[RMDB]
RNA sequence: GGGAACGACUCGAGUAGAGUCGAAAAGGACCUUUAAGAACUGCUUUGGUCCCACUGUCAUGGGAGGUUAGUGCUGUCUGGAGCAGGCAUGGGGAUGUGGUGGUACAGGGUAGGGUGUAGGGGUCCCGUCCAGUCGAUGAUUCGUCAUCGACUGGACAAAAGAAACAACAACAACAAC
Reactivity to DMS in 0.01 (KOAc 150mM, MgCl2 10mM, bicine 150mM(pH8.5), 24C), signal-to-noise 1, nucleotides 027 to 126: g000g020a110c030c010u010u000u010a050a080g000a170a130c140u010g000c020u010u000u010g020g000u000c010c120c050a070c100u000g000u010c090a100u010g010g030g000a070g000g000u000u000a110g030u000g000c120u000g000u000c000u000g000g000a040g050c030a080g000g000c030a010u010g000g010g000g000a130u020g010u010g040g030u030g010g010u010a100c100a090g000g000g000u000a100g000g000g020u000g010u010a060g000g000g000g000u000c030c020c080
Reactivity to 2A3 in 0.01 (KOAc 150mM, MgCl2 10mM, bicine 150mM(pH8.5), 24C), signal-to-noise 2, nucleotides 027 to 126: g030g000a050c010c010u040u110u050a140a090g020a150a110c060u070g010c030u100u060u140g050g000u050c060c020c000a040c030u140g030u060c040a140u100g050g000g010a120g000g070u080u160a010g030u010g060c070u040g080u070c040u040g010g050a070g030c030a010g060g000c010a050u080g040g000g000g000a040u120g100u050g040g080u050g040g050u090a080c030a040g000g050g050u100a020g050g010g000u130g080u070a020g000g030g010g000u040c000c020c010
Conditions: 150 mM KOAc, 10 mM MgCl2 and 150 mM bicine (pH 8.5), 24 C. An RNA of 177 nucleotides, treated with DMS and 2A3 and read out base by base. For 2A3 the reverse transcriptase was SuperScript II with manganese. Reactivities are given for positions 27 through 126. The DMS profile rests on 989 reads.